Conditions: 150 mM KOAc, 10 mM MgCl2 and 150 mM bicine (pH 8.5), 24 C.
The record gives the reactivity of an RNA of 207 nucleotides to DMS and 2A3.
The DMS profile rests on 2,165 reads.
2A3 adducts were read by reverse transcription with SuperScript II with manganese.
[RMDB]
RNA sequence: GGGAACGACUCGAGUAGAGUCGAAAAUUUUCAGAAACUUCAGAUGUUCCAUCCGAGGUCAAACAAUUGAGAAUAGACUGGAACCAGCUGUCGUAAUCGGAAGUUUCGAUCUUUAGAACAAUCAAUCCAUUCGCUUCGGCGGCAAGCAUUUUGAGGAAACACUGAAAUCUUUCGAGAUUUCAGUGUUAAAAGAAACAACAACAACAAC
Reactivity to DMS in 0.01 (KOAc 150mM, MgCl2 10mM, bicine 150mM(pH8.5), 24C), signal-to-noise 2, nucleotides 027 to 156: u010u000u050u000c020a120g050a100a080a040c010u010u000c000a030g010a040u010g030u000u000c060c020a110u000c060c020g010a110g030g000u000c010a080a080a090c070a140a120u000u000g010a170g020a080a090u000a090g000a140c040u020g010g010a050a060c030c030a170g000c010u010g040u000c000g060u020a080a030u010c010g010g020a140a070g020u000u010u030c050g000a040u000c020u030u000u000a110g010a130a130c080a090a120u020c070a090a110u010c050c070a150u010u020c120g020c040u000u000c110g030g010c030g020g000c050a080a030g000c030a120u000u030u000u010g020a110g030g020a300
Reactivity to 2A3 in 0.01 (KOAc 150mM, MgCl2 10mM, bicine 150mM(pH8.5), 24C), signal-to-noise 2, nucleotides 027 to 156: u030u010u020u050c030a070g030a030a060a010c000u020u000c000a040g000a110u030g030u040u040c020c000a040u060c020c050g250a040g040g090u040c020a050a060a040c040a110a220u060u130g030a040g010a090a050u040a040g020a020c130u080g020g010a020a040c030c000a040g040c000u010g020u060c010g040u040a060a070u050c020g000g020a010a030g000u000u030u040c050g010a060u050c010u110u160u080a060g010a120a050c040a100a060u120c010a020a020u000c000c040a060u110u030c020g040c070u030u010c060g040g000c000g040g020c050a040a010g040c020a040u070u150u090u180g030a020g120g010a170